This 177-nucleotide RNA was probed chemically with DMS and 2A3. Values are in units of 0.01, from 0 to 300, in steps of 10. The DMS profile rests on 8,457 reads. 2A3 is a SHAPE reagent: it acylates the 2'-hydroxyl of flexible nucleotides of all four kinds. DMS adducts were read by reverse transcription with MarathonRT. The RNA was probed in 150 mM KOAc, 10 mM MgCl2 and 150 mM bicine (pH 8.5) at 24 C.
RNA sequence: GGGAACGACUCGAGUAGAGUCGAAAAGAAAGAAAAGAAAGAAAAUCAGAGCCCAAAUAAACCGAGAUAACCUCAUCUCAUCGGUGUAGAUGAAAAGGACGCAUACGUCCAAAGGGCUCUGAAAGAACCCAUUACUAGGUUUCGACCUAGUAAUGGGAAAAGAAACAACAACAACAAC
Reactivity to DMS in 0.01 (KOAc 150mM, MgCl2 10mM, bicine 150mM(pH8.5), 24C), signal-to-noise 5, nucleotides 027 to 126: g000a100a100a100g020a110a070a090a110g010a110a070a080g000a090a100a110a090u000c000a000g000a010g000c010c010c000a040a080a080u010a040a080a000c010c010g000a020g000a060u020a080a150c120c100u020c090a070u010c100u010c060a110u030c030g000g020u000g000u010a050g010a090u010g000a060a060a080a110g000g020a000c010g030c300a160u040a110c050g000u000c010c000a010a100a120g010g000g000c000u010c000u000g010a000a030a090g010a080a080
Reactivity to 2A3 in 0.01 (KOAc 150mM, MgCl2 10mM, bicine 150mM(pH8.5), 24C), signal-to-noise 4, nucleotides 027 to 126: g010a000a070a000g140a040a120a020a010g170a050a080a020g060a070a140a000a010u020c000a000g000a000g000c020c000c040a020a180a010u050a010a050a000c000c020g000a010g030a100u100a070a060c020c050u060c040a040u010c010u010c030a280u090c040g040g000u040g040u060a050g030a160u140g040a070a090a040a010g000g000a000c000g000c100a060u130a220c060g000u010c000c000a000a020a010g000g000g000c000u000c000u000g000a000a000a000g000a010a020